[RMDB]
RNA sequence: GGGAACGACUCGAGUAGAGUCGAAAAGAACAUUGUAUGAUCGGUAUAUACGGAGUUUUAUUAUGGAUCGUACUAUGGAACUCUGUAGUGAGCAUGCAUGUGCUCUCUCUCCGCUGCAUGGCUCGCAGGGAUAAGAAUAGUUCGCUAUUCUUAUCCCAAAAGAAACAACAACAACAAC
Reactivity to DMS in 0.01 (KOAc 150mM, MgCl2 10mM, bicine 150mM(pH8.5), 24C), signal-to-noise 4, nucleotides 027 to 126: g010a110a110c030a020u000u000g020u000a010u010g000a030u000c010g020g030u010a040u060a100u010a040c070g020g010a110g010u020u010u010u000a040u010u030a050u030g000g010a050u030c060g010u000a020c040u000a010u010g000g000a060a100c050u000c020u010g010u020a070g030u000g000a010g000c000a010u000g000c010a030u040g010u000g000c170u010c020u010c020u000c000u000c030c000g000c030u000g000c010a010u010g010g020c020u000c010g030c030a160
Reactivity to 2A3 in 0.01 (KOAc 150mM, MgCl2 10mM, bicine 150mM(pH8.5), 24C), signal-to-noise 9, nucleotides 027 to 126: g060a040a020c010a010u030u050g010u010a010u020g010a020u010c040g070g100u050a110u010a010u010a100c100g170g080a140g060u090u080u060u030a120u070u050a060u090g150g010a020u050c020g010u030a010c010u020a010u020g010g040a050a050c020u020c020u080g090u070a080g020u020g030a000g000c000a000u010g000c010a030u250g020u020g040c010u010c000u000c010u000c010u010c070c010g010c020u000g000c000a020u030g130g050c000u010c020g010c020a050
The data come from the RNA Mapping Database (RMDB), library OK1LIB. Chemical mapping of a 177-nucleotide RNA with DMS and 2A3. For DMS, 16,357 sequencing reads were counted. DMS (dimethyl sulfate) methylates the pairing face of unpaired adenines and cytosines. Values cover nucleotides 27 to 126.